Structure probing data (2A3 and DMS) for a 177-nucleotide construct.
For DMS the reverse transcriptase was MarathonRT.
For 2A3 the reverse transcriptase was SuperScript II with manganese.
The reactions ran in a buffer of 150 mM KOAc, 10 mM MgCl2 and 150 mM bicine (pH 8.5), at 24 C.

[RMDB]
RNA sequence: GGGAACGACUCGAGUAGAGUCGAAAAGGCAUCCUCCAGGAGGACUACAGCGCACUGGAGACGGUUGGCUUGCAGGUGUUGACCCGCGACGUUAACCUCAAGGCUGCACUGCUCAAAGGGCUGGACAAUGCAAAGGACUAUUCGUAGUCCUUUGCAUAAAAGAAACAACAACAACAAC
Reactivity to 2A3 in 0.01 (KOAc 150mM, MgCl2 10mM, bicine 150mM(pH8.5), 24C), signal-to-noise 2, nucleotides 027 to 126: g060g000c020a090u020c000c010u000c040c030a050g060g030a030g030g050a050c040u100a050c090a050g020c030g010c050a030c060u030g040g030a020g010a030c040g030g000u030u030g030g000c030u020u040g000c030a030g030g030u080g030u260u230g130a080c000c000c000g070c010g020a070c080g010u040u030a020a040c000c000u010c030a010a040g090g000c020u020g010c030a030c090u040g000c010u020c030a070a130a050g030g060g010c030u040g010g020a030c070a100
Reactivity to DMS in 0.01 (KOAc 150mM, MgCl2 10mM, bicine 150mM(pH8.5), 24C), signal-to-noise 4, nucleotides 027 to 126: g020g000c110a130u000c030c010u000c010c040a090g010g000a110g000g020a090c090u000a100c090a040g020c040g020c050a130c030u000g000g000a180g010a110c100g010g010u010u000g010g010c010u010u000g000c040a030g000g000u000g020u010u010g000a080c030c010c050g020c070g010a040c140g010u000u000a040a050c030c020u000c080a130a130g000g000c100u000g000c040a060c050u000g000c050u000c060a030a080a140g000g010g000c030u000g000g000a040c170a080